[RMDB]
RNA sequence: GGGAACGACUCGAGUAGAGUCGAAAAGGGCUUGACGCAUCGCCCGAAUACGAUGCAUGUGCUUUUGCACUAAGAUAAAUGUCCGUAUCGUAGGGGACUUAGAACCUACUCAUUAAUGUCCGAAGAGUCUGGGACGAUCAUCAGGCGAGACUAAGAAGAUUUAGUGAGGUUUCGACCUCACUAAAUCAAAAGAAACAACAACAACAAC
Reactivity to 2A3 in 0.01 (KOAc 150mM, MgCl2 10mM, bicine 150mM(pH8.5), 24C), signal-to-noise 4, nucleotides 027 to 156: g040g000g010c040u030u070g030a010c020g010c040a000u010c030g000c010c020c000g020a020a010u040a010c010g010a010u010g010c020a070u020g020u010g030c030u090u160u220u300g000c000a000c010u070a050a100g100a110u170a130a270a090u240g030u020c050c050g040u060a070u070c010g000u000a040g000g020g030g010a030c030u060u090a080g030a040a030c000c010u020a040c030u000c010a040u040u240a130a050u170g020u010c030c030g040a110a060g020a020g070u010c020u020g010g040g010a050c040g050a090u050c010a000u010c000a010g010g030c040g020a020g010a060c070u090a090a030g040a070a040
Reactivity to DMS in 0.01 (KOAc 150mM, MgCl2 10mM, bicine 150mM(pH8.5), 24C), signal-to-noise 2, nucleotides 027 to 156: g010g020g020c000u000u030g030a100c100g020c120a010u000c010g060c020c010c120g000a080a160u000a020c000g050a000u020g030c000a230u010g040u020g020c040u000u010u010u020g070c000a050c000u000a030a060g010a150u000a030a120a090u000g030u010c050c050g020u000a080u000c040g030u010a080g050g010g000g000a080c090u000u000a120g030a090a090c070c020u000a030c070u000c100a110u000u000a100a100u000g000u000c040c020g030a070a200g020a180g000u000c020u010g020g030g000a040c070g020a050u010c010a000u000c010a050g060g010c030g000a080g000a110c020u030a080a090g030a090a200